RNA sequence: GGGAACGACUCGAGUAGAGUCGAAAAGUCAAGAGGAUGUGUAGGAUCAAGGAAGGGUUUUUAUUUGUGCAUAAUUCCUGUAUGCUUUCUUGGAUUAAUCAGAUUGCUAGAUAAGAGGAAGCCUGGGACGGAAAGACAAUUUCGAUUGUCUUUCCGUAAAAGAAACAACAACAACAAC
Reactivity to 2A3 in 0.01 (KOAc 150mM, MgCl2 10mM, bicine 150mM(pH8.5), 24C), signal-to-noise 2, nucleotides 027 to 126: g080u070c030a060a000g010a010g050g020a070u050g030u030g050u100a030g040g030a030u060c020a020a050g020g030a040a070g060g000g010u020u060u080u030u020a170u030u130u100g070u070g040c040a020u010a070a060u150u050c000c020u030g040u110a100u110g030c000u020u070u000c030u030u070g070g020a100u090u170a040a010u070c010a010g050a180u020u220g020c060u090a070g000a060u040a080a010g030a010g030g020a010a010g000c000c020u050g000g050g050
Reactivity to DMS in 0.01 (KOAc 150mM, MgCl2 10mM, bicine 150mM(pH8.5), 24C), signal-to-noise 3, nucleotides 027 to 126: g010u000c070a070a070g000a080g010g000a060u000g020u000g010u000a050g010g000a060u010c070a060a050g000g000a050a060g010g000g010u010u000u010u000u010a060u010u020u000g010u020g010c110a070u000a060a120u010u010c020c020u010g000u000a060u000g000c010u000u000u010c020u000u000g000g010a110u000u010a060a070u010c050a050g000a160u000u010g010c060u000a110g000a050u000a070a080g010a040g000g010a040a050g000c030c070u000g000g010g010
Record summary
Structure probing data (2A3 and DMS) for a 177-nucleotide construct. Values cover nucleotides 27 to 126. For 2A3, 1,474 sequencing reads were counted. Source: RMDB library OK2TST, as collected in RNAgym. Conditions: 150 mM KOAc, 10 mM MgCl2 and 150 mM bicine (pH 8.5), 24 C.